[RMDB]
RNA sequence: GGGAACGACUCGAGUAGAGUCGAAAAGAUAUGGAAAUAUUGGCGAUAAGUCCGUUUCGGAAACGAAACUGGACUUUUGACGCAGGUUUCCUAAGUCGAGAGAGAACCUGUUUCGACAGGUUCUCAAUGAAAAGCUCUGUUUCGACAGAGCUUUUCAAAAAGAAACAACAACAACAAC
Reactivity to DMS in 0.01 (KOAc 150mM, MgCl2 10mM, bicine 150mM(pH8.5), 24C), signal-to-noise 1, nucleotides 027 to 126: g000a030u020a290u010g000g000a010a010a010u000a040u000u020g040g020c000g030a160u010a020a040g010u000c000c000g000u000u000u000c000g010g040a150a060a120c000g000a000a010a010c000u030g020g000a000c000u010u000u030u010g000a110c070g000c010a030g000g000u000u000u010c000c000u000a040a140g000u000c030g010a140g020a200g000a010g000a020a000c000c000u000g000u010u000u000c150g000a020c000a010g000g010u000u000c000u020c000a050a090